[RMDB]
Notes: Source: RMDB library OK2TRN, as collected in RNAgym. The record gives the reactivity of an RNA of 177 nucleotides to DMS and 2A3. Reactivities are given for positions 27 through 126. In probing experiments dimethyl sulfate is read out at A N1 and C N3, which are open when not base-paired. 2A3 adducts were read by reverse transcription with SuperScript II with manganese.
RNA sequence: GGGAACGACUCGAGUAGAGUCGAAAAUCGGAGGGAAACGCGUUUUAGUAAUCGGUCGGAUAUACUGAUUAUGAGUGAGCUGGGAGACUUCGGCGAGUUUACGUCCGACGAGAGCGACGACGCCGCAAUCCCCAAAAUCAUUCGUGAUUUUGGGGAUAAAAGAAACAACAACAACAAC
Reactivity to DMS in 0.01 (KOAc 150mM, MgCl2 10mM, bicine 150mM(pH8.5), 24C), signal-to-noise 1, nucleotides 027 to 126: u000c050g010g010a080g020g010g010a070a080a130c170g010c030g000u020u000u010u000a290g000u000a040a120u000c010g000g010u000c070g030g030a070u010a110u000a050c060u000g010a110u000u000a050u000g010a080g010u000g000a120g000c040u010g000g000g000a170g000a080c100u010u000c040g000g000c040g010a100g020u000u000u010a070c100g010u000c000c000g020a050c060g000a060g000a250g000c020g010a090c300g000a060c050g020c040c070g010c180a070
Reactivity to 2A3 in 0.01 (KOAc 150mM, MgCl2 10mM, bicine 150mM(pH8.5), 24C), signal-to-noise 2, nucleotides 027 to 126: u100c020g050g020a070g000g010g060a010a100a000c030g030c010g010u000u010u030u070a040g000u010a030a060u030c050g090g020u020c020g040g030a020u080a010u020a170c040u060g070a150u090u220a100u210g040a020g070u060g030a030g000c000u030g010g040g040a220g040a090c030u070u020c060g030g000c010g010a000g000u010u070u040a100c070g000u010c010c000g010a030c030g000a030g000a000g000c020g020a030c020g010a000c030g000c000c000g000c020a010